[RMDB]
RNA sequence: GGGAACGACUCGAGUAGAGUCGAAAAAAAUCCUGGGGAGGGUUUAGGCAUCCAAAUGGGUAGCAAUAGCUCCGUCCCUUUGGAGAGACGGUCCAGAGACCGGGCCAGUCAGACCCGGUCGGGAAAUUAAUAGCCUUCUAUUCGUAGAAGGCUAUUAAAAAGAAACAACAACAACAAC
Reactivity to 2A3 in 0.01 (KOAc 150mM, MgCl2 10mM, bicine 150mM(pH8.5), 24C), signal-to-noise 3, nucleotides 027 to 126: a000a000a010u040c020c000u010g030g000g000g020a020g000g020g010u060u110u130a050g030g020c020a010u010c030c040a040a120a210u300g020g000g020u070a100g020c020a080a160u060a110g000c010u050c120c090g110u110c030c010c010u060u100u140g020g010a040g000a000g000a030c070g010g040u020c040c020a020g040a000g000a160c000c010g000g010g010c040c020a060g110u140c020a000g040a100c000c000c000g000g020u000c000g000g030g020a060a050a000u040
Reactivity to DMS in 0.01 (KOAc 150mM, MgCl2 10mM, bicine 150mM(pH8.5), 24C), signal-to-noise 4, nucleotides 027 to 126: a100a070a080u010c010c000u010g000g000g020g010a200g000g010g010u010u000u020a050g020g000c040a060u000c010c010a100a060a060u060g030g010g000u010a080g010c030a090a090u020a100g020c040u020c120c060g000u000c010c010c020u000u010u010g020g000a050g020a120g000a070c090g000g010u010c000c010a100g010a170g000a020c020c000g000g010g010c030c020a200g010u040c270a110g010a100c010c000c010g000g000u020c000g020g010g010a050a050a080u010
The record gives the reactivity of an RNA of 177 nucleotides to 2A3 and DMS. DMS adducts were read by reverse transcription with MarathonRT. It was measured as part of the RMDB libraries RFM100 and RFMREP. Reactivities are rounded to 0.1 and cut off at 0 and 3. The reactions ran in a buffer of 150 mM KOAc, 10 mM MgCl2 and 150 mM bicine (pH 8.5), at 24 C.